[RMDB]
RNA sequence: GGGAACGACUCGAGUAGAGUCGAAAAGUUAUGCUCUCGCUGCCUAAUGGCGGUGCGGGAAACCCACUCUAAAGUCCUUAGGGUUAGCCCCUUAACGCGGGGUUCGGAGGCACCUGGCAACAGAAGCUGAAACUGUGCACAUUCGUGUGCACAGUAACAGUAGAGACUACUUCGGUAGUCUCUACUGAAAAGAAACAACAACAACAAC
Reactivity to 2A3 in 0.01 (KOAc 150mM, MgCl2 10mM, bicine 150mM(pH8.5), 24C), signal-to-noise 1, nucleotides 027 to 156: g070u100u090a110u300g020c010u020c010u010c000g020c030u050g020c010c000u240a300a150u220g040g000c030g020g060u030g000c020g010g010g000a020a000a050c010c020c000a030c000u030c030u070a090a110a100g110u110c010c020u030u060a020g030g030g000u050u080a030g020c010c000c020c020u020u100a110a020c040g010c060g020g010g000g000u050u020c050g070g030a020g010g030c010a050c010c020u010g050g000c020a030a000c000a080g090a100a000g010c030u100g000a120a020a010c000u000g000u000g010c000a000c000a010u030u120c230g050u050g000u000g010c000a000c000a000g000u010a000a000
Reactivity to DMS in 0.01 (KOAc 150mM, MgCl2 10mM, bicine 150mM(pH8.5), 24C), signal-to-noise 1, nucleotides 027 to 156: g020u020u000a030u000g010c000u000c000u010c020g010c020u000g050c020c000u000a120a140u000g050g030c010g050g050u000g030c080g020g030g030a070a020a080c010c000c000a140c040u010c020u000a080a090a210g010u000c100c030u000u000a040g010g020g040u010u000a170g020c070c010c000c010u000u000a090a130c130g020c220g000g000g020g050u000u020c080g040g010a090g030g030c020a050c020c010u000g060g000c020a100a070c010a130g000a090a140g020c020u020g010a060a060a060c010u000g020u000g020c000a020c030a030u000u010c290g050u000g030u000g030c010a000c000a000g000u000a030a110
Overview: Conditions: 150 mM KOAc, 10 mM MgCl2 and 150 mM bicine (pH 8.5), 24 C. This 207-nucleotide RNA was probed chemically with 2A3 and DMS. The DMS profile rests on 2,295 reads. It was measured as part of the RMDB library M2RFPK. For DMS the reverse transcriptase was MarathonRT.